[RMDB]
RNA sequence: GGGAACGACUCGAGUAGAGUCGAAAACUCAACUAAUAAAUCAUAAUGCAGAUCUUGGUUUAAGGUAUUGGAAAUCCAUCCACUUUCUACUCUUCCAUGCUGUGUCUCUGAAAGAGUAAUUUCUGUCCACUCCCUGCCCUCCCGUGGGAGGCAGACAGCGUAUGAGCAAAUUCGUUUGCUCAUACGCAAAAGAAACAACAACAACAAC
Reactivity to 2A3 in 0.01 (KOAc 150mM, MgCl2 10mM, bicine 150mM(pH8.5), 24C), signal-to-noise 2, nucleotides 027 to 156: c020u020c050a050a000c090u140a100a300u110a180a100a070u120c060a060u080a300a090u030g020c040a020g010a110u010c030u060u040g010g050u050u060u120a040a040g040g000u100a150u070u110g030g030a100a040a040u020c050c020a010u010c030c000a040c020u090u140u000c010u010a010c000u020c000u090u000c030c000a060u030g050c030u050g070u090g070u080c000u000c030u050g060a140a070a040g030a040g040u060a050a080u040u120u000c020u040g020u040c080c010a040c060u050c030c020c000u010g030c040c010c020u030c000c000c000g000u070g040g010g000a000g000g000c000a010g000a010c040a000
An RNA of 207 nucleotides, treated with 2A3 and read out base by base. Conditions: 150 mM KOAc, 10 mM MgCl2 and 150 mM bicine (pH 8.5), 24 C. Values are in units of 0.01, from 0 to 300, in steps of 10.